[RMDB]
Structure probing data (2A3 and DMS) for a 177-nucleotide construct.

RNA sequence: GGGAACGACUCGAGUAGAGUCGAAAAGAUAUGGAAUCUGUAGGGAGGUGGUCGGAAACGACCAUACCAUCGAUCUACCAGAUUCCUAAGUCAAAGCCAUUGCAUGAGUUCGCUCAUGCAAUGGCAACUGGAACUAAUUGUUCGCAAUUAGUUCCAGAAAAGAAACAACAACAACAAC
Reactivity to 2A3 in 0.01 (KOAc 150mM, MgCl2 10mM, bicine 150mM(pH8.5), 24C), signal-to-noise 3, nucleotides 027 to 126: g010a010u080a040u170g000g000a000a010u000c000u010g000u010a010g040g000g040a030g000g000u030g010g000u020c000g010g030a060a090a010c060g040a020c030c020a070u170a090c020c000a100u300c020g030a040u000c000u010a030c100c050a010g000a010u000u030c000c000u010a130a010g060u050c070a110a060a060g020c010c000a010u020u010g010c000a000u000g000a000g040u060u160c250g070c200u000c010a000u000g010c000a010a000u000g000g030c000a000a000
Reactivity to DMS in 0.01 (KOAc 150mM, MgCl2 10mM, bicine 150mM(pH8.5), 24C), signal-to-noise 3, nucleotides 027 to 126: g000a070u000a300u000g010g010a030a000u000c000u000g000u000a020g000g010g000a150g010g020u010g000g010u000c030g010g000a070a070a180c030g000a030c010c010a050u000a010c020c030a220u010c110g000a170u000c000u000a010c130c080a010g010a010u000u000c010c000u000a020a100g000u010c040a080a080a110g010c010c000a000u000u000g000c000a000u000g000a010g000u000u030c270g000c000u000c000a000u000g000c000a000a000u000g000g010c000a010a020
Reactivities are given for positions 27 through 126.